[RMDB]
RNA sequence: GGGAACGACUCGAGUAGAGUCGAAAAUACAUCCAUCGAAUUCACAGCAGCUGUUUCAUAGUCAGCGGAGUUCGAAGAUAUGGUUUGAGAGCCAAUCCCUGCUACCUCCGGCAAUGACGGCUGUGGAGGGUGCGGAGUACUUCGGUACUCCGCACCCAAAAGAAACAACAACAACAAC
Reactivity to 2A3 in 0.01 (KOAc 150mM, MgCl2 10mM, bicine 150mM(pH8.5), 24C), signal-to-noise 1, nucleotides 027 to 126: u010a000c050a050u000c000c000a010u000c010g060a000a170u170u160c100a110c020a070g000c010a000g000c000u040g100u000u050u130c010a050u000a100g000u040c040a000g040c060g000g000a040g000u030u060c110g070a110a000g000a050u210a100u060g160g150u190u030u160g300a300g000a000g020c000c000a000a020u010c000c000c000u070g000c000u050a110c000c000u000c000c010g000g070c010a000a090u120g000a040c000g070g010c000u000g000u040g010g000a000
Chemical mapping of a 177-nucleotide RNA with 2A3. The 2A3 profile rests on 330 reads. The RNA was probed in 150 mM KOAc, 10 mM MgCl2 and 150 mM bicine (pH 8.5) at 24 C. Reactivities are rounded to 0.1 and cut off at 0 and 3. 2A3 adducts were read by reverse transcription with SuperScript II with manganese.